An RNA of 207 nucleotides, treated with 2A3 and read out base by base.
It was measured as part of the RMDB library M2RFPK.
The reactions ran in a buffer of 150 mM KOAc, 10 mM MgCl2 and 150 mM bicine (pH 8.5), at 24 C.
RNA sequence: GGGAACGACUCGAGUAGAGUCGAAAAAGAUCCACGCUACGGCGUGGAUCACACGUUCAUCCCUAUUGGGACGGAAGUAGGCAUAGUGCCGAAGGAACGUAUUAGUCAUGCGCUACGGCGCAUGACACACAUCAGAGUCACUUCGGUGACUCUGAAAGGGUAUAGAGAGGUUCGCCUCUCUAUACCCAAAAGAAACAACAACAACAAC
Reactivity to 2A3 in 0.01 (KOAc 150mM, MgCl2 10mM, bicine 150mM(pH8.5), 24C), signal-to-noise 2, nucleotides 027 to 156: a010g000a000u000c000c000a000c000g000c000u030a080c300g080g000c000g030u000g000g000a000u000c010a000c000a000c000g010u020u020c000a060u020c060c000c000u200a300u190u300g020g000g000a030c040g050g010a090a010g030u030a030g020g000c080a120u070a300g110u120g190c000c000g030a000a010g010g030a040a000c010g000u030a180u040u170a080g000u010c000a000u030g000c000g010c010u020a030c130g110g000c000g000c000a000u000g010a000c000a000c000a000c000a120u090c000a000g000a000g020u010c000a020c010u060u080c120g230g000u000g030a000c000u000c000u000g000a000a000a010